Chemical mapping of a 177-nucleotide RNA with 2A3 and DMS. It was measured as part of the RMDB library OK1LIB. For DMS the reverse transcriptase was MarathonRT. For DMS, 2,885 sequencing reads were counted. Values cover nucleotides 27 to 126. Values are in units of 0.01, from 0 to 300, in steps of 10. The 2A3 profile rests on 4,051 reads.

[RMDB]
RNA sequence: GGGAACGACUCGAGUAGAGUCGAAAAACGAAGCAGAACAUAUCUCCGCAGCCGCAAGUUCAUCUUCGAUGCCUUCGCCUACAUCGGAAAUGUGGAGAAAUACUGUAAGGGAAUAUGUGCGGCAAACCGUCAGUCAUAUCUUCGGAUAUGACUGACGAAAAGAAACAACAACAACAAC
Reactivity to 2A3 in 0.01 (KOAc 150mM, MgCl2 10mM, bicine 150mM(pH8.5), 24C), signal-to-noise 6, nucleotides 027 to 126: a010c080g020a080a000g030c090a030g050a110a020c040a090u160a110u050c010u010c000c010g000c030a050g040c020c010g030c050a030a110g030u090u080c030a080u040c100u090u030c030g020a010u020g010c010c050u100u110c070g030c020c010u030a010c010a040u030c040g040g040a050a110a060u030g000u050g020g030a060g070a050a040a020u180a020c030u040g060u170a080a130g110g030g030a050a000u100a050u220g100u050g020c010g020g010c000a000a030a040c030
Reactivity to DMS in 0.01 (KOAc 150mM, MgCl2 10mM, bicine 150mM(pH8.5), 24C), signal-to-noise 2, nucleotides 027 to 126: a190c050g020a100a090g010c070a000g020a130a110c070a060u010a080u000c020u000c000c010g000c130a040g020c000c000g050c100a060a040g000u020u010c010a060u010c140u000u000c090g000a020u000g010c280c020u000u040c020g000c000c050u030a160c030a020u010c030g000g000a000a060a000u020g010u000g000g000a080g000a070a110a040u060a100c000u020g000u000a060a080g040g050g010a060a040u020a000u010g010u000g000c010g000g000c030a100a030a070c160